[RMDB]
RNA sequence: GGGAACGACUCGAGUAGAGUCGAAAACUCUGAGGUGGCUAGCAGUCUGACCCCUUGGAGGAGAUGGGGACAGCUCUAGGUGUAGGUGGGCAGAAACCAGCACUGCAUCCUCACUCAUGGGCCAGGGCCAUCGCUGUAAAUUCGUUUACAGCGAUGGAAAAGAAACAACAACAACAAC
Reactivity to DMS in 0.01 (KOAc 150mM, MgCl2 10mM, bicine 150mM(pH8.5), 24C), signal-to-noise 5, nucleotides 027 to 126: c020u000c010u000g020a070g000g020u010g040g010c020u000a050g030c160a120g010u020c030u010g010a160c020c010c000c030u010u000g020g000a050g030g000a080g010a120u000g000g010g000g000a130c080a090g000c030u010c030u010a150g010g010u000g020u010a020g020g010u010g000g020g000c030a040g000a050a060a070c080c050a090g010c080a100c020u000g000c010a300u010c010c000u000c020a060c030u010c030a100u000g010g000g010c010c030a090g000g000g000
Reactivity to 2A3 in 0.01 (KOAc 150mM, MgCl2 10mM, bicine 150mM(pH8.5), 24C), signal-to-noise 5, nucleotides 027 to 126: c020u000c020u030g050a020g050g030u150g090g030c050u040a040g010c070a070g110u100c030u050g180a240c000c000c010c020u020u070g050g010a030g030g030a060g000a060u140g000g000g010g020a020c040a030g020c000u000c020u060a050g010g010u030g030u110a030g010g070u100g050g130g020c020a020g050a070a080a050c030c020a010g070c040a020c030u020g000c010a040u040c000c000u020c010a010c000u090c030a090u160g020g000g010c030c020a020g010g030g000